Structure probing data (2A3 and DMS) for a 170-nucleotide construct. The 2A3 profile rests on 10,124 reads. For DMS, 13,454 sequencing reads were counted. Values cover nucleotides 27 to 129. Values are in units of 0.01, from 0 to 300, in steps of 10.

RNA sequence: GGGAACGACUCGAGUAGAGUCGAAAAAGUGAAGAUGAUACUUUUAUUAUACACAUGUUUAGGUUUCAUGUGUACUUGCUAUUUUGGUGUCUUCUCUCUUUUGAACCUUAAGCUUAGAGCACCUAUGAAAGACAGCACUUCGGUGCUGUCAAAAGAAACAACAACAACAAC
Reactivity to 2A3 in 0.01 (KOAc 150mM, MgCl2 10mM, bicine 150mM(pH8.5), 24C), signal-to-noise 5, nucleotides 027 to 129: a000g050u030g100a140a010g000a000u030g000a000u010a030c010u070u150u050u020a070u010u130a010u010a000c010a000c000a000u000g070u020u100u140a220g110g090u070u100u060c000a000u000g010u000g000u000a070c050u070u120g050c050u050a080u110u090u040u100g000g000u000g010u000c000u000u000c000u000c000u000c000u030u010u010u050g030a030a030c010c000u010u070a110a010g060c000u020u050a060g020a010g040c010a030c030c020u060a090u120g120a100a040a050
Reactivity to DMS in 0.01 (KOAc 150mM, MgCl2 10mM, bicine 150mM(pH8.5), 24C), signal-to-noise 3, nucleotides 027 to 129: a000g000u020g000a070a020g070a020u020g020a000u010a020c020u040u020u020u000a080u040u020a140u050a000c000a010c020a030u010g040u020u080u080a160g040g020u070u050u040c040a020u030g020u010g010u010a030c090u060u040g000c140u000a000u020u020u030u020g020g010u010g030u020c000u070u000c020u010c040u010c030u120u020u000u000g020a090a210c020c010u020u060a070a090g040c090u010u040a050g010a090g000c040a060c040c050u050a080u060g000a000a000a000